[RMDB]
RNA sequence: GGGAACGACUCGAGUAGAGUCGAAAAGUUGCCGACGAACCUUCCAACCUUCCAAACGUCGUUUUCGACAACCUUCCAACCUUCCAAUCUACUCGAGAGGAGGUGGAGGAGGAGGAGGAGGAAUUAAGCAUUGCAUAACGUUCGCGUUAUGCAAUGCAAAAGAAACAACAACAACAAC
Reactivity to 2A3 in 0.01 (KOAc 150mM, MgCl2 10mM, bicine 150mM(pH8.5), 24C), signal-to-noise 1, nucleotides 027 to 126: g080u040u030g110c000c010g000a040c020g050a070a090c000c030u040u060c020c050a170a140c040c020u070u090c050c000a100a110a050c050g040u000c000g000u100u040u050u120c000g040a020c020a050a040c020c000u090u080c040c030a180a160c020c000u130u020c020c000a060a060u000c030u050a110c040u040c050g030a000g000a020g000g040a050g040g020u000g010g040a030g050g020a050g030g030a040g000g040a040g000g030a010g030g140a030a030u150u140a090a010
Reactivity to DMS in 0.01 (KOAc 150mM, MgCl2 10mM, bicine 150mM(pH8.5), 24C), signal-to-noise 1, nucleotides 027 to 126: g000u010u000g030c060c000g000a090c180g020a060a100c020c010u000u010c020c050a040a120c020c010u000u050c000c030a070a100a150c220g000u000c020g040u000u000u000u000c010g000a020c070a120a100c010c000u000u000c020c000a050a070c030c130u020u000c000c030a130a240u000c010u000a050c190u000c160g080a030g000a300g000g000a070g000g020u000g020g000a120g020g040a170g000g000a160g000g000a120g000g040a150g000g000a300a060u000u000a060a120